[RMDB]
RNA sequence: GGGAACGACUCGAGUAGAGUCGAAAAUCCGACGAGCUGAACGCUUUCGAAGGAAAGCUUGACCAGCUAAUCUUCUGCAACGCCAUUACGAGGACUGCCGUUAGAGGCUCAUGGCGAUAGGUCACCCAAAACUAUUUGAGGUUCGCCUCAAAUAGAAUCAAGUAUCUAACUUCGGUUAGAUACUUGAAAAAGAAACAACAACAACAAC
Reactivity to DMS in 0.01 (KOAc 150mM, MgCl2 10mM, bicine 150mM(pH8.5), 24C), signal-to-noise 5, nucleotides 027 to 156: u010c020c020g030a120c040g010a060g050c020u000g010a090a140c170g010c010u000u010u000c020g010a270a180g010g000a030a050a020g010c010u000u000g010a160c110c020a070g010c010u000a070a140u010c030u010u000c050u000g010c010a120a130c030g000c020c010a090u000u000a100c080g000a140g010g000a080c040u000g020c010c040g000u000u010a140g020a230g000g010c010u000c050a060u000g000g000c010g020a110u000a030g010g000u000c030a130c020c020c020a040a070a090a200c000u000a010u000u000u010g000a020g020g000u000u000c300g000c010c000u000c000a000a010a000u000a000g000a100a130
Reactivity to 2A3 in 0.01 (KOAc 150mM, MgCl2 10mM, bicine 150mM(pH8.5), 24C), signal-to-noise 9, nucleotides 027 to 156: u040c020c010g030a050c040g030a020g000c010u040g050a140a030c050g010c010u060u080u060c040g060a100a060g120g010a060a060a000g010c000u070u080g060a050c030c000a000g000c000u030a070a100u040c080u160u030c040u110g040c040a120a040c020g000c010c000a050u090u130a090c110g040a050g080g090a110c070u070g010c010c020g050u070u120a080g020a080g140g000c010u010c020a010u020g010g000c000g040a070u110a050g000g010u030c020a070c010c020c000a030a100a040a070c000u000a000u000u000u000g010a010g020g040u050u100c210g060c050c000u000c000a000a000a000u000a000g000a000a030

The data come from the RNA Mapping Database (RMDB), library M2RFPK. This 207-nucleotide RNA was probed chemically with DMS and 2A3.